[RMDB]
RNA sequence: GGGAACGACUCGAGUAGAGUCGAAAACUUCUACUUCCCUUGAUGCCCGUGGUGAGGUGACCGAGGUGUUGCCGCAUGGCAGGGACUUCAAAAUGGAAUAAGACACGCUGAGGGCGGGCCUCGGGGGGUAUUUCUGAUACUUCGGUAUCAGAAAUACAAAAGAAACAACAACAACAAC
Reactivity to 2A3 in 0.01 (KOAc 150mM, MgCl2 10mM, bicine 150mM(pH8.5), 24C), signal-to-noise 2, nucleotides 027 to 126: c000u080u060c030u100a070c040u110u140c000c000c000u000u080g020a010u010g010c010c030c010g050u040g040g300u030g050a050g050g000u020g050a040c030c090g040a080g120g020u130g070u040u020g000c000c010g080c230a170u240g000g000c000a000g080g030g080a010c000u030u020c020a030a060a110a210u190g090g070a130a120u170a250a060g080a060c030a010c110g050c020u010g020a030g000g090g030c020g010g010g020c000c020u000c000g020g010g010g000g050
Reactivity to DMS in 0.01 (KOAc 150mM, MgCl2 10mM, bicine 150mM(pH8.5), 24C), signal-to-noise 2, nucleotides 027 to 126: c120u000u000c020u000a050c060u020u000c000c010c020u020u000g010a040u000g020c020c000c000g040u000g030g010u000g000a220g000g010u000g010a110c060c070g020a080g010g030u000g020u000u010g020c020c030g000c180a070u010g000g020c010a010g000g010g010a040c030u010u000c040a070a050a110a150u020g020g000a110a120u010a140a100g000a140c100a070c050g010c070u000g000a250g000g010g000c030g000g010g020c020c060u010c010g000g010g000g010g000